[RMDB]
RNA sequence: GGGAACGACUCGAGUAGAGUCGAAAACGAUAAGCAUUCGUGCUUAUCGACGGUAGGAAAGUACAAAGGAGCAAAAGCAUCGGCUCCUAAAAACGAUGCAAAAGACAACGGGGUUCGCCCCGUUGAACACGUUUAUAGCAUUCGUGCUAUAAACGUGAAAAGAAACAACAACAACAAC
Reactivity to 2A3 in 0.01 (KOAc 150mM, MgCl2 10mM, bicine 150mM(pH8.5), 24C), signal-to-noise 5, nucleotides 027 to 126: c000g000a010u000a010a000g000c010a010u040u130c210g080u050g010c000u000u000a000u000c000g000a010c020g040g040u070a050g010g190a200a090a030g070u080a090c090a080a260a110g020g000a000g000c020a030a140a160a020g010c000a010u010c000g000g000c010u010c000c000u060a030a000a000a000a000c000g000a000u010g000c000a060a030a020a040g090a040c010a010a000c000g000g020g000g010u040u050c130g120c000c000c000c000g000u000u000g000a000a000
Reactivity to DMS in 0.01 (KOAc 150mM, MgCl2 10mM, bicine 150mM(pH8.5), 24C), signal-to-noise 4, nucleotides 027 to 126: c020g010a000u000a000a000g000c000a040u000u010c230g030u000g000c000u000u000a000u000c000g020a050c130g010g030u000a040g020g010a100a050a090g000u000a040c110a110a110a190g000g010a010g010c000a090a070a070a150g010c010a000u000c010g010g000c010u000c000c010u000a010a020a010a010a030c000g000a020u000g000c010a100a060a080a090g000a170c020a010a010c000g000g000g010g020u000u000c230g010c000c010c000c000g000u000u000g010a050a190